[RMDB]
RNA sequence: GGGAACGACUCGAGUAGAGUCGAAAACGAAGCGGCGUAGAGACUGUGGUGGUCGACGCCGACCCACAGAAGUCCGCAUCGAAGUGGGUGAAGACCGCCGCUGAGCGAGGGAUCGGCAUGCCGUUCGAGGUUGUCGACGGCUCAGACCGGCUGGUGCUCACAUACUAGAGUUCGCUCUAGUAUGUGAAAAAGAAACAACAACAACAAC
Reactivity to 2A3 in 0.01 (KOAc 150mM, MgCl2 10mM, bicine 150mM(pH8.5), 24C), signal-to-noise 4, nucleotides 027 to 156: c040g050a060a010g050c000g000g000c030g040u050a040g060a020g030a250c020u020g040u090g100g120u160g070g010u050c040g030a120c060g050c020c010g010a000c000c000c000a000c010a010g050a080a000g050u050c020c030g050c060a050u040c020g040a100a030g000u050g030g030g000u030g030a020a010g070a040c010c000g000c000c000g000c000u010g000a000g010c040g030a180g090g070g080a170u020c010g000g010c000a020u220g100c010c020g030u170u210c140g080a150g040g010u020u010g010u010c000g000a000c010g030g000c000u000c000a020g020a050c140c040g020g000c120u140g000g000u030g020c000
Reactivity to DMS in 0.01 (KOAc 150mM, MgCl2 10mM, bicine 150mM(pH8.5), 24C), signal-to-noise 2, nucleotides 027 to 156: c040g000a130a110g020c010g020g010c040g030u010a090g010a240g000a100c010u000g020u010g050g030u010g010g020u000c000g000a060c110g010c070c010g020a030c030c000c000a060c040a120g010a120a100g000u000c030c060g010c070a090u010c040g010a140a170g000u010g010g000g040u000g000a090a080g020a070c030c000g000c000c010g010c030u010g000a040g020c000g020a140g070g030g020a100u000c000g030g010c010a040u010g050c000c000g010u000u000c140g020a110g040g020u000u000g000u000c000g010a020c010g000g000c000u000c040a050g010a110c060c030g010g050c020u010g020g020u010g000c060
An RNA of 207 nucleotides, treated with 2A3 and DMS and read out base by base. For DMS, 6,066 sequencing reads were counted.